The data come from the RNA Mapping Database (RMDB), library RSTRND. This 207-nucleotide RNA was probed chemically with DMS and 2A3. The DMS profile rests on 4,113 reads. For 2A3, 2,760 sequencing reads were counted.
[RMDB]
RNA sequence: GGGAACGACUCGAGUAGAGUCGAAAAGACGAAAAUUACGCUCUAGCAGCUUAAACCCUGUUUACUUGGUUGCUGAUCACCUACAGUUGGUCAACUAAGUUGAAGCGUCCGCAUGUAGGAUCGCCACAAGGGAUUGUCUCAAUCCUUUGGGUUCAAACCAUAUAGAGAGGUUCGCCUCUCUAUAUGGAAAAGAAACAACAACAACAAC
Reactivity to DMS in 0.01 (KOAc 150mM, MgCl2 10mM, bicine 150mM(pH8.5), 24C), signal-to-noise 2, nucleotides 027 to 156: g000a210c070g000a070a100a090a130u010u010a120c040g020c010u000c020u000a060g030c040a030g010c070u010u010a080a120a170c160c110c020u000g020u000u000u000a060c020u000u010g000g010u010u000g020c000u000g010a040u000c020a100c000c040u000a040c030a030g020u000u010g040g000u010c010a030a010c010u000a020a030g020u010u010g030a120a060g020c020g030u010c050c060g000c150a080u000g010u000a050g040g010a100u000c070g010c040c020a010c010a030a010g040g000g000a010u000u010g010u010c100u000c020a020a040u010c000c000u000u000u000g010g000g020u000u020c080a080a120a230
Reactivity to 2A3 in 0.01 (KOAc 150mM, MgCl2 10mM, bicine 150mM(pH8.5), 24C), signal-to-noise 4, nucleotides 027 to 156: g090a020c060g070a040a100a010a050u300u190a030c020g010c000u010c040u040a020g000c020a010g010c020u070u080a060a030a030c010c020c000u000g020u010u080u040a010c010u000u020g000g000u000u000g000c010u020g000a010u000c020a030c080c010u000a020c000a000g000u010u010g040g040u200c030a000a010c010u020a010a010g030u070u190g260a160a010g010c000g020u050c070c030g140c080a020u020g020u020a000g000g030a070u180c090g000c010c020a170c000a080a000g000g000g000a010u010u030g200u090c080u060c220a000a000u000c000c000u000u010u000g000g000g000u040u100c020a030a040a050